[RMDB]
RNA sequence: GGGAACGACUCGAGUAGAGUCGAAAAACGUCUGACUUCGGUCAGACGUAAAAAGAUAUGGACGUUCCGAAGGAUCAACAGCAAGUGUCGGAAACGACACUUGACAUGAUCCUGGACGGCGUCCUAAGUCAAAAACGCCGUCGUUCGCGACGGCGAAUACGCUUAAUCACUUCGGUGAUUAAGCGUAAAAAGAAACAACAACAACAAC
Reactivity to 2A3 in 0.01 (KOAc 150mM, MgCl2 10mM, bicine 150mM(pH8.5), 24C), signal-to-noise 1, nucleotides 027 to 156: a000c000g000u010c000u000g000a020c020u060u060c280g070g000u000c030a000g000a000c000g000u000a000a000a000a000a000g080a060u060a060u260g020g000a000c010g020u300u280c050c010g010a010a000g000g000a000u000c000a030a030c020a090g070c010a010a000g000u000g000u000c000g000g000a090a040a040c020g010a000c010a000c000u000u010g030a030c010a000u050g000a000u000c000c000u000g000g070a020c000g020g000c010g020u000c000c000u010a050a070g040u060c050a110a000a060a000a060c020g020c000c000g030u020c010g010u040u160c250g000c050g190a000c000g020g000c010g030a030a010
Structure probing data (2A3) for a 207-nucleotide construct.
The data come from the RNA Mapping Database (RMDB), library RNAMAK.
Values cover nucleotides 27 to 156.
For 2A3 the reverse transcriptase was SuperScript II with manganese.